[RMDB]
RNA sequence: GGGAACGACUCGAGUAGAGUCGAAAAGAUAUGGAAUAGGUACUGGGUGGCGACGAAGUCGGAAACGACAGAGCCACGUACUAUUCCUAAGUCAAAACUGAUGCACCUGUUCGCAGGUGCAUCAGAAGUCAUAACAGGUGUUCGCACCUGUUAUGACAAAAGAAACAACAACAACAAC
Reactivity to DMS in 0.01 (KOAc 150mM, MgCl2 10mM, bicine 150mM(pH8.5), 24C), signal-to-noise 3, nucleotides 027 to 126: g000a020u000a300u000g000g000a000a000u000a020g010g010u000a000c030u000g020g020g040u000g000g000c000g030a250c270g000a060a100g000u000c000g010g000a130a060a150c000g010a010c000a020g000a180g010c000c000a000c020g000u000a000c000u000a010u000u000c000c000u000a030a090g030u000c010a060a040a160a150c010u000g020a020u000g000c000a010c000c010u000g010u000u020c200g020c000a010g000g010u000g010c000a000u000c000a010g010a050a040
Reactivity to 2A3 in 0.01 (KOAc 150mM, MgCl2 10mM, bicine 150mM(pH8.5), 24C), signal-to-noise 2, nucleotides 027 to 126: g010a020u040a050u090g020g010a000a020u020a060g250g110u050a030c070u250g300g140g020u000g000g000c010g050a300c040g020a180a010g000u010c000g030g000a090a090a070c010g000a000c000a010g000a000g000c010c000a010c000g000u010a000c000u000a010u000u000c010c000u000a060a020g050u020c070a020a010a130a180c000u000g040a010u000g020c000a000c000c000u010g030u090u070c290g010c100a010g000g000u000g000c000a000u000c000a000g000a000a010
Structure probing data (DMS and 2A3) for a 177-nucleotide construct.
The RNA was probed in 150 mM KOAc, 10 mM MgCl2 and 150 mM bicine (pH 8.5) at 24 C.
Reactivities are rounded to 0.1 and cut off at 0 and 3.
For 2A3 the reverse transcriptase was SuperScript II with manganese.